[RMDB]
Chemical mapping of a 177-nucleotide RNA with 2A3 and DMS. For 2A3, 2,145 sequencing reads were counted.

RNA sequence: GGGAACGACUCGAGUAGAGUCGAAAAAUGAACCGUUGGACGAGCACGAGCGAGGCAGUCAUUGACGUGGCGAAAUGGGACACGUUGGCCGGCGCGUUGGUGCCCGUUCCAUGGGCACAAGUGACGGCACGGCAGAGCCAUUCGUGGCUCUGCCGUGAAAAGAAACAACAACAACAAC
Reactivity to 2A3 in 0.01 (KOAc 150mM, MgCl2 10mM, bicine 150mM(pH8.5), 24C), signal-to-noise 2, nucleotides 027 to 126: a000u120g040a080a060c010c010g050u020u010g010g000a010c010g000a000g010c010a010c030g050a000g000c020g000a020g090g000c010a030g030u030c040a030u020u220g040a010c000g000u000g040g000c050g030a050a130a200u210g030g030g070a030c010a000c030g010u020u030g030g000c010c010g110g000c020g020c030g020u000u020g090g000u000g000c000c000c010g030u100u030c000c000a010u040g020g010g000c090a020c040a210a040g030u130g100a030c020g010g020
Reactivity to DMS in 0.01 (KOAc 150mM, MgCl2 10mM, bicine 150mM(pH8.5), 24C), signal-to-noise 3, nucleotides 027 to 126: a110u000g010a110a100c010c010g010u010u010g000g010a040c020g000a060g010c020a030c020g000a030g010c020g000a050g000g000c020a190g010u010c020a190u010u010g010a010c040g030u000g000g000c030g020a090a120a140u010g010g010g010a070c020a000c010g030u000u000g010g010c000c000g000g000c020g000c010g000u000u010g020g020u000g000c000c020c010g010u000u010c030c060a050u010g020g000g010c050a050c090a050a040g020u000g000a120c090g010g000